RNA sequence: GGGAACGACUCGAGUAGAGUCGAAAAAUGCCGCAUUCAGCGACGGUAACUCUAGUGGGCUACUGUCUAUCUAGCGUUGACAUCUACAUACUAUAUAGUAAUACCAAUACUCAAGACUACGAAACGGGAGUAUACCCGAUUUCGAUCGGGUAUACUCAAAAGAAACAACAACAACAAC
Reactivity to DMS in 0.01 (KOAc 150mM, MgCl2 10mM, bicine 150mM(pH8.5), 24C), signal-to-noise 2, nucleotides 027 to 126: a020u000g000c010c000g020c110a110u000u030c050a140g000c120g000a110c030g000g000u000a000a030c030u000c010u020a050g000u030g000g000g000c090u030a000c110u000g060u000c020u000a050u030c000u000a010g030c120g000u010u020g000a180c080a070u000c060u010a070c030a060u000a080c080u000a120u050a240u040a090g020u030a090a060u000a070c010c020a080a090u000a000c050u020c130a100a050g030a090c080u000a060c090g000a050a080a060c200g030g000
Reactivity to 2A3 in 0.01 (KOAc 150mM, MgCl2 10mM, bicine 150mM(pH8.5), 24C), signal-to-noise 6, nucleotides 027 to 126: a000u140g030c020c000g040c050a060u140u130c050a020g040c000g070a040c010g050g030u050a030a030c000u010c010u030a040g020u080g050g010g000c020u080a060c060u190g000u000c010u010a070u030c010u020a000g020c010g040u010u040g030a040c010a090u040c020u090a040c040a120u120a080c030u060a070u090a070u080a210g090u060a050a090u040a140c010c020a040a060u030a080c010u050c020a050a100g040a070c050u090a020c130g100a070a070a040c060g080g030